Chemical mapping of a 177-nucleotide RNA with 2A3 and DMS. Source: RMDB library RFMREP, as collected in RNAgym. For 2A3 the reverse transcriptase was SuperScript II with manganese.
RNA sequence: GGGAACGACUCGAGUAGAGUCGAAAAGACCGGGAAACCAAAGCCCGGACCGGAACACCAACAAGCACCGGCCAGCGAGAACGCAGAUCGGUCAUACAAAAAAUUUCGGAUGUACGCGCAGAGCAGGCUCAUAUAAUCUGUUCGCAGAUUAUAUGAGAAAAGAAACAACAACAACAAC
Reactivity to 2A3 in 0.01 (KOAc 150mM, MgCl2 10mM, bicine 150mM(pH8.5), 24C), signal-to-noise 3, nucleotides 027 to 126: g010a000c010c010g000g000g010a090a070a050c060c010a090a080a020g020c000c020c000g000g000a000c010c000g000g030a040a020c030a030c050c030a030a050c060a090a050g050c050a020c020c010g030g000c000c010a020g010c030g030a070g060a270a030c050g000c020a020g010a090u020c000g030g040u000c020a070u160a100c130a000a130a020a020a030a090u060u130u070c020g040g010a020u060g030u080a040c050g010c010g000c050a020g010a000g100c040a020g060g000
Reactivity to DMS in 0.01 (KOAc 150mM, MgCl2 10mM, bicine 150mM(pH8.5), 24C), signal-to-noise 3, nucleotides 027 to 126: g010a150c010c000g010g020g020a130a070a160c060c110a160a200a260g000c000c010c000g010g030a080c010c000g010g000a070a070c080a090c070c100a090a070c130a120a120g010c130a030c040c010g000g020c020c010a080g020c040g010a120g030a150a100c040g020c010a040g010a050u000c020g010g020u000c050a060u010a030c120a000a020a070a060a070a100u000u000u000c040g010g010a160u000g000u000a040c060g010c020g000c050a080g010a070g030c070a030g020g010
For DMS the reverse transcriptase was MarathonRT.